[RMDB]
RNA sequence: GGGAACGACUCGAGUAGAGUCGAAAACCGUAGGAUACUUUUGACGCCUCAAUGUCAUCAACAGCACUCCUUCGAAAGAGGGAGUGACAUGAUGAAUCAAGGGCGAUAAGUAUCCUAAACGGAAAGCACGGAUACCGAUUCGUCGGUAUCCGUGCAACUACUAAAUAUUCUUCGGAAUAUUUAGUAGAAAAGAAACAACAACAACAAC
Reactivity to DMS in 0.01 (KOAc 150mM, MgCl2 10mM, bicine 150mM(pH8.5), 24C), signal-to-noise 1, nucleotides 027 to 156: c010c000g060u000a020g010g000a000u000a000c000u000u000u000u010g000a250c070g070c020c000u000c070a100a110u000g020u000c040a010u000c020a040a050c100a190g000c000a010c000u010c000c000u000u000c000g000a180a080a300g000a030g030g000g010a010g020u010g020a020c020a300u010g000a000u000g000a040a060u000c190a280a110g000g030g000c010g000a080u000a070a050g000u000a000u000c010c010u010a000a020a080c050g000g010a110a120a170g030c040a040c000g030g000a060u000a000c000c000g060a080u000u000c260g060u000c000g040g000u000a020u000c010c000g040u010g010c010a000a040
Reactivity to 2A3 in 0.01 (KOAc 150mM, MgCl2 10mM, bicine 150mM(pH8.5), 24C), signal-to-noise 5, nucleotides 027 to 156: c000c000g000u020a010g010g000a000u000a000c000u000u110u080u190g280a150c040g010c010c020u130c090a130a170u260g060u050c000a000u000c010a010a130c040a140g050c000a000c000u000c000c000u010u010c010g070a110a070a040g000a000g000g000g000a000g000u000g010a010c000a030u020g000a000u000g010a010a040u080c090a100a190g010g000g010c010g000a000u000a000a000g000u000a000u000c000c000u000a040a060a000c010g050g040a140a050a020g000c000a000c000g000g000a000u000a000c010c000g010a020u050u100c260g030u020c000g130g000u000a000u000c000c000g000u000g000c000a000a000
About this RNA
Chemical mapping of a 207-nucleotide RNA with DMS and 2A3. The reactions ran in a buffer of 150 mM KOAc, 10 mM MgCl2 and 150 mM bicine (pH 8.5), at 24 C. 2A3 adducts were read by reverse transcription with SuperScript II with manganese.